[RMDB]
RNA sequence: GGGAACGACUCGAGUAGAGUCGAAAACGUCUAUACCGUAAAAUCGAUUUUCGACGGAAUGAAAAAGACAUAUAUGGUAGAAUCGUAACCAUAGAAUACGACCCUAAUCGAAAUGCAUACAUUUGUCCAAGCCAUGAAGGUUCGCCUUCAUGGCUUGAAAAGAAACAACAACAACAAC
Reactivity to 2A3 in 0.01 (KOAc 150mM, MgCl2 10mM, bicine 150mM(pH8.5), 24C), signal-to-noise 3, nucleotides 027 to 126: c080g000u000c020u050a140u080a140c030c020g010u020a010a010a070a190u200c110g130a250u120u030u010u150c060g060a010c050g010g120a050a060u080g140a070a210a070a080a030g050a000c000a000u080a000u020a010u060g070g000u060a030g110a080a210u120c090g050u020a020a020c020c000a020u010a070g160a010a050u130a110c130g090a100c040c000c030u030a010a090u030c000g050a070a000a010u110g030c050a010u060a300c040a110u210u100u090g060u000c000
Reactivity to DMS in 0.01 (KOAc 150mM, MgCl2 10mM, bicine 150mM(pH8.5), 24C), signal-to-noise 2, nucleotides 027 to 126: c140g000u000c010u030a070u000a130c000c010g020u030a090a020a160a060u000c060g060a010u040u000u030u000c150g020a020c100g000g000a100a100u000g010a070a150a050a150a110g000a050c040a130u000a070u020a010u000g000g040u000a090g000a090a050u000c120g010u000a190a070c000c050a030u000a040g000a130a170u000a150c080g000a030c020c030c000u000a030a040u010c040g000a070a060a030u040g020c030a060u030a050c160a040u030u010u000g000u020c030

This 177-nucleotide RNA was probed chemically with 2A3 and DMS. 2A3 adducts were read by reverse transcription with SuperScript II with manganese. The DMS profile rests on 1,859 reads.